[RMDB]
RNA sequence: GGGAACGACUCGAGUAGAGUCGAAAAUGAAAUCAUAUCCAAGAAAUGAAUUCAGGUAACGUGUCUCGAAUAGGCUCUUUUCUCUAGUGAUGUCGUUGACGAUAAUCUUAAAUUCGUUUUUUCUCUUGUAAACGUCGAUCCUUGUUUUCACGACGUCCAGUCCAGACCAGUUCGCUGGUCUGGACUGAAAAGAAACAACAACAACAAC
Reactivity to 2A3 in 0.01 (KOAc 150mM, MgCl2 10mM, bicine 150mM(pH8.5), 24C), signal-to-noise 1, nucleotides 027 to 156: u080g000a040a010a010u080c000a000u000a080u150c060c090a120a060g160a040a130a080u140g020a010a030u050u050c050a020g030g000u050a050a020c040g070u050g050u070c010u000c080g020a080a060u100a150g050g090c000u050c060u000u080u170u050c060u000c030u090a140g080u160g170a040u080g020u040c060g020u040u050g020a000c000g030a010u080a100a080u130c060u120u130a230a160a170u070u080c030g040u000u000u030u000u100u000c100u070c000u100u070g030u170a250a000a000c010g000u000c020g020a080u140c010c050u040u140g040u060u100u050u100c070a060c040g080a030c000g000u000c030

Conditions: 150 mM KOAc, 10 mM MgCl2 and 150 mM bicine (pH 8.5), 24 C. Chemical mapping of a 207-nucleotide RNA with 2A3. For 2A3, 459 sequencing reads were counted. Reactivities are given for positions 27 through 156.